This 177-nucleotide RNA was probed chemically with DMS. The DMS profile rests on 988 reads. The data come from the RNA Mapping Database (RMDB), library OK1LIB. The RNA was probed in 150 mM KOAc, 10 mM MgCl2 and 150 mM bicine (pH 8.5) at 24 C.

RNA sequence: GGGAACGACUCGAGUAGAGUCGAAAAGAUAAGAUUCAUAGUCGAAAGGGCAACAGCCCAGAUCGUCAGCUAAGGUCCCUAAAUGUAAGUUAAGUGGUAAAGGAUGUGGGAUUGCACAGACAACCAGAAUACUGGCUGCUUUCGAGCAGCCAGUAUUAAAAGAAACAACAACAACAAC
Reactivity to DMS in 0.01 (KOAc 150mM, MgCl2 10mM, bicine 150mM(pH8.5), 24C), signal-to-noise 1, nucleotides 027 to 126: g000a100u000a040a030g000a170u000u000c070a170u000a000g000u000c010g000a010a080a170g000g020g020c090a140a200c300a160g000c000c000c000a080g000a090u040c040g000u110c020a090g000c000u030a100a170g010g020u000c000c000c000u000a090a140a060u030g030u000a140a020g000u000u000a000a050g030u000g030g000u050a000a090a200g000g000a070u000g000u000g000g000g000a190u000u010g060c000a040c040a010g000a170c040a060a060c090c000a060g000